[RMDB]
Background:
Conditions: 150 mM KOAc, 10 mM MgCl2 and 150 mM bicine (pH 8.5), 24 C. This 207-nucleotide RNA was probed chemically with 2A3 and DMS. The DMS profile rests on 6,367 reads. It was measured as part of the RMDB library OK3TST.
RNA sequence: GGGAACGACUCGAGUAGAGUCGAAAAGUAAUAGAUAGCGGGAUGACGAGAAAGGGUGCGCUGAUAUCCUGCACGAAUGCUAGCAGUAAAUAGAAUAGCGCUCCUAAUACAACUAGCAACAAAAGGAUAAGGUAUCGUGAUGUCAAUCACAUUGCGAUAUGGGUAAAUACUUCGGUAUUUACCCAUAAAAAGAAACAACAACAACAAC
Reactivity to 2A3 in 0.01 (KOAc 150mM, MgCl2 10mM, bicine 150mM(pH8.5), 24C), signal-to-noise 4, nucleotides 027 to 156: g010u040a010a140u060a110g090a050u080a020g040c020g020g030g000a030u050g030a060c070g020a030g090a100a080a060g070g000g010u030g010c030g000c010u000g030a020u010a020u110c030c020u000g010c030a000c090g090a190a050u160g070c080u080a020g000c020a020g030u080a050a050a080u080a050g120a130a080u050a040g000c010g000c010u030c000c000u000a030a030u060a020c000a030a050c040u050a050g010c040a020a060c020a040a100a030a020g040g010a030u050a080a060g060g010u040a010u030c000g000u010g010a010u000g020u050c070a060a020u110c010a000c000a020u000u010g000c010g000a000
Reactivity to DMS in 0.01 (KOAc 150mM, MgCl2 10mM, bicine 150mM(pH8.5), 24C), signal-to-noise 3, nucleotides 027 to 156: g020u000a070a150u010a120g010a100u010a080g020c060g000g040g020a070u000g010a160c050g000a130g010a080a120a160g000g010g040u010g010c040g030c020u020g000a130u010a070u010c030c000u000g000c070a140c080g010a090a110u010g010c040u000a080g030c010a120g020u000a040a070a130u000a090g000a070a160u000a060g030c040g010c020u000c030c000u000a060a190u000a120c020a040a070c020u000a020g010c030a050a150c050a030a040a090a070g000g010a070u000a040a070g020g030u010a040u000c010g060u000g010a030u000g020u000c010a110a110u000c130a130c000a040u000u000g020c030g010a050